[RMDB]
RNA sequence: GGGAACGACUCGAGUAGAGUCGAAAAUUUUAACCUAAAAGCCUUGAACGCUGUCGUUUCGCCGUCGACAACAAUCACACGCGCACACUUCCACCAUUAUCAUCUAUCCACCACACAGGUUCGUCGGGAAGGAAGUCUAGUUCGCUAGACUUCCUUCAAAAGAAACAACAACAACAAC
Reactivity to DMS in 0.01 (KOAc 150mM, MgCl2 10mM, bicine 150mM(pH8.5), 24C), signal-to-noise 2, nucleotides 027 to 126: u020u040u000u060a090a130c030c040u020a080a000a160a100g000c030c030u000u000g000a050a100c110g030c010u010g000u010c050g000u000u000u000c050g050c010c030g020u000c000g020a020c120a080a020c140a090a110u050c020a110c030a080c110g000c150g000c000a020c010a070c010u060u000c050c010a020c040c010a050u010u000a060u000c120a000u020c020u020a080u000c000c010a060c100c050a030c060a040c060a040g000g050u000u000c040g050u020c070g040g010
Reactivity to 2A3 in 0.01 (KOAc 150mM, MgCl2 10mM, bicine 150mM(pH8.5), 24C), signal-to-noise 2, nucleotides 027 to 126: u120u100u050u060a040a020c000c000u030a080a080a000a020g040c000c030u080u110g090a070a020c030g020c060u060g020u040c010g040u030u060u080c060g030c010c000g020u060c040g040a030c030a210a020c000a020a130u030c010a030c010a020c050g050c020g000c000a000c010a000c090u020u040c010c000a020c020c010a070u050u120a060u160c040a000u030c040u020a030u030c010c000a070c030c000a050c000a010c000a040g000g050u030u030c020g070u020c010g110g060

The data come from the RNA Mapping Database (RMDB), library RFM100. An RNA of 177 nucleotides, treated with DMS and 2A3 and read out base by base. As a SHAPE reagent, 2A3 marks flexible, mostly unpaired nucleotides at the ribose 2'-OH. For DMS the reverse transcriptase was MarathonRT.